Chemical mapping of a 177-nucleotide RNA with 2A3 and DMS. Source: RMDB library OK1LIB, as collected in RNAgym. The RNA was probed in 150 mM KOAc, 10 mM MgCl2 and 150 mM bicine (pH 8.5) at 24 C. The DMS profile rests on 1,312 reads.

RNA sequence: GGGAACGACUCGAGUAGAGUCGAAAAUGGGCAUUCGUCGUGGUCUUUUUUUACCUCGUGUUCAGCUCGGCGAGGAAACACAAAUGUGGAGACAGACGGGGACCGCGCGUCGAUCGAAGGAGGUGGGUGCCAUGGAUGAGUUCGCUCAUCCAUGGCAAAAAGAAACAACAACAACAAC
Reactivity to 2A3 in 0.01 (KOAc 150mM, MgCl2 10mM, bicine 150mM(pH8.5), 24C), signal-to-noise 2, nucleotides 027 to 126: u100g020g040g020c080a110u180u040c120g070u000c040g120u050g030g070u040c000u030u000u010u030u000u030u130a080c000c000u000c000g000u000g090u160u220c200a060g050c120u080c080g080g010c040g000a020g000g000a030a050a000c180a040c040a120a230a110u270g000u010g050g000a030g000a020c040a010g050a060c010g000g020g010g050a050c000c000g000c000g020c000g140u070c010g040a040u040c050g030a010a030g040g040a050g000g060u070g070g010g040
Reactivity to DMS in 0.01 (KOAc 150mM, MgCl2 10mM, bicine 150mM(pH8.5), 24C), signal-to-noise 1, nucleotides 027 to 126: u060g020g000g020c090a150u000u000c000g010u040c030g020u030g010g010u000c000u000u000u000u000u000u000u000a130c000c050u010c050g060u000g060u030u000c120a030g000c120u000c060g000g010c000g000a040g000g000a050a080a050c100a040c160a100a060a090u110g010u000g010g040a090g010a010c110a090g000a010c210g000g000g000g010a090c080c040g040c140g020c140g020u000c030g000a020u030c150g040a090a030g040g000a140g000g000u040g000g000g010